Chemical mapping of a 177-nucleotide RNA with 2A3 and DMS. For 2A3 the reverse transcriptase was SuperScript II with manganese. The reactions ran in a buffer of 150 mM KOAc, 10 mM MgCl2 and 150 mM bicine (pH 8.5), at 24 C. DMS adducts were read by reverse transcription with MarathonRT. Values cover nucleotides 27 to 126. The 2A3 profile rests on 1,705 reads.
[RMDB]
RNA sequence: GGGAACGACUCGAGUAGAGUCGAAAACGUGCGUACUGGGCCGCCGGCACAAUGUUCGACCCAGCCGUCUCAGAGGGCGCGGUUCGACCACGAUCAGCCAGCCGGUCAGCGGGGUCCUCCUAGCUAGAAUUUAGUAUCCGUUCGCGGAUACUAAAUUAAAAGAAACAACAACAACAAC
Reactivity to 2A3 in 0.01 (KOAc 150mM, MgCl2 10mM, bicine 150mM(pH8.5), 24C), signal-to-noise 2, nucleotides 027 to 126: c020g010u050g050c040g080u110a100c060u060g000g070g010c000c020g000c000c010g050g040c030a030c010a070a080u100g020u110u020c030g000a050c040c010c010a030g030c060c050g190u030c040u040c080a080g080a140g110g050g000c010g000c050g000g000u010u080c010g000a010c020c020a030c050g080a110u090c000a030g050c050c000a010g040c070c020g000g040u010c010a010g000c030g040g050g010g020u050c000c000u000c000c000u060a070g040c030u050a060g060
Reactivity to DMS in 0.01 (KOAc 150mM, MgCl2 10mM, bicine 150mM(pH8.5), 24C), signal-to-noise 4, nucleotides 027 to 126: c070g020u000g020c020g020u000a090c070u000g020g020g000c030c090g030c070c050g010g000c040a080c160a110a090u010g000u000u000c030g000a070c040c010c030a230g030c060c020g010u010c010u010c170a130g010a090g000g000g010c010g030c150g000g000u000u010c020g000a030c040c030a040c070g000a120u000c140a140g000c020c030a080g010c060c050g040g000u010c040a050g010c040g000g000g010g010u010c020c050u000c020c030u000a070g030c070u010a090g000